Source information: This 177-nucleotide RNA was probed chemically with DMS and 2A3. The 2A3 profile rests on 1,042 reads. The RNA was probed in 150 mM KOAc, 10 mM MgCl2 and 150 mM bicine (pH 8.5) at 24 C. For DMS, 1,261 sequencing reads were counted. 2A3 adducts were read by reverse transcription with SuperScript II with manganese.
[RMDB]
RNA sequence: GGGAACGACUCGAGUAGAGUCGAAAACAGUAGAGAAGGCAUGAACAUCAAAAUUUCAGAUCCAGCCUUCUUCCAUGGUUCGUUUUGAAGUCCAAUUUUGGUGUAGUUUUCGAUGCCCACUGGUUAGCAGUGCAGUCCUGUUCGCAGGACUGCACUGAAAAGAAACAACAACAACAAC
Reactivity to DMS in 0.01 (KOAc 150mM, MgCl2 10mM, bicine 150mM(pH8.5), 24C), signal-to-noise 1, nucleotides 027 to 126: c020a030g010u010a130g000a240g010a110a060g000g000c050a150u000g000a040a090c140a050u050c030a060a000a070a090u010u020u010c090a020g000a020u000c030c190a080g000c000c000u000u040c080u030u020c160c020a050u010g000g020u000u000c200g000u060u000u000u000g010a050a000g020u000c030c050a140a080u000u000u090u000g000g000u000g060u000a000g000u000u000u000u000c080g010a100u030g000c000c010c030a080c000u000g000g000u030u000a130g000
Reactivity to 2A3 in 0.01 (KOAc 150mM, MgCl2 10mM, bicine 150mM(pH8.5), 24C), signal-to-noise 2, nucleotides 027 to 126: c020a030g140u180a020g020a020g010a170a040g010g010c040a080u080g050a040a020c020a010u060c020a020a020a030a140u080u190u010c080a010g020a030u050c010c010a010g000c020c000u070u070c010u040u070c050c000a030u100g020g010u060u020c010g010u000u000u000u080g080a050a000g120u080c070c140a180a140u030u040u000u050g020g000u040g050u020a160g040u030u070u060u100c050g000a070u070g020c000c010c010a020c000u000g000g080u120u050a020g050